[RMDB]
Chemical mapping of a 207-nucleotide RNA with DMS and 2A3.

RNA sequence: GGGAACGACUCGAGUAGAGUCGAAAAUAGUAACUGCUAGCCUCCAUGUAUGUGGAGCACUACAAACAUUGCUGAGCCCUUGCUAUAUGAUGCACUGAUCCCAGCACUGACUGGGAGGAAGGCCUGGUUGGAAGCUUGGUUUUGACGUCAAGAAGUAGUGAUCCUGAUAUUUCGAUAUCAGGAUCACAAAAGAAACAACAACAACAAC
Reactivity to DMS in 0.01 (KOAc 150mM, MgCl2 10mM, bicine 150mM(pH8.5), 24C), signal-to-noise 2, nucleotides 027 to 156: u000a040g000u010a050a130c100u010g000c080u010a090g000c220c000u000c030c010a000u010g000u000a050u020g040u000g010g000a050g050c030a050c010u000a020c050a090a080a070c080a100u000u000g000c000u010g000a180g020c020c000c030u000u010g010c020u000a150u000a100u000g020a110u010g010c020a130c050u000g010a160u000c010c010c010a020g030c050a200c190u000g020a100c040u010g050g020g000a060g000g050a080a090g020g010c030c020u000g000g030u020u000g030g020a080a170g000c020u000u000g030g040u000u000u000u000g030a070c060g000u010c020a040a100g000a070a030g020u010a150
Reactivity to 2A3 in 0.01 (KOAc 150mM, MgCl2 10mM, bicine 150mM(pH8.5), 24C), signal-to-noise 4, nucleotides 027 to 156: u140a020g040u040a080a080c080u050g000c030u060a010g040c020c030u000c000c050a010u070g230u250a100u220g020u130g000g010a030g020c040a030c040u110a040c070a070a140a020c040a090u100u100g000c020u040g010a020g020c000c000c000u030u050g020c020u060a040u030a070u290g070a050u110g000c020a040c120u040g020a030u030c020c000c000a000g030c040a060c170u140g170a100c000u010g000g000g030a010g000g060a030a030g030g000c000c050u050g050g000u070u060g030g040a070a050g000c020u000u020g020g000u050u050u090u130g070a040c050g010u030c050a090a020g040a040a020g080u130a000
The reactions ran in a buffer of 150 mM KOAc, 10 mM MgCl2 and 150 mM bicine (pH 8.5), at 24 C. The 2A3 profile rests on 2,114 reads. DMS (dimethyl sulfate) methylates the pairing face of unpaired adenines and cytosines.